RNA sequence: GGGAACGACUCGAGUAGAGUCGAAAAAGGCACCCUUCUAUACCAUUUUACAUACAGAGUGGCUGAGAGGUUCUCCUCAGAGCUCUGUUUGUGAACGCAGAGCUUACUGGAGAAGCGUUGUAAGAACUGCGUUCAUAGUUCUGUGAAUGCCGUGCCACAUCGUCGUUUUAUUCGUAAAACGACGAUGAAAAGAAACAACAACAACAAC
Reactivity to 2A3 in 0.01 (KOAc 150mM, MgCl2 10mM, bicine 150mM(pH8.5), 24C), signal-to-noise 1, nucleotides 027 to 156: a000g040g000c040a050c020c060c040u100u100c060u040a100u080a090c010c040a070u050u040u110u230a010c000a010u140a000c000a000g010a010g010u100g130g150c000u010g000a000g000a030g040g180u270u120c120u100c080c010u010c000a000g010a000g000c000u000c010u000g000u020u050u000g000u000g000a000a000c000g010c000a000g000a050g010c000u000u000a000c010u110g110g090a180g050a210a050g150c030g120u180u060g010u020a010a020g000a080a080c000u040g000c020g030u030u010c010a010u010a030g030u110u050c090u150g040u010g010a030a030u030g080c120c070g000u010g000c020c000a030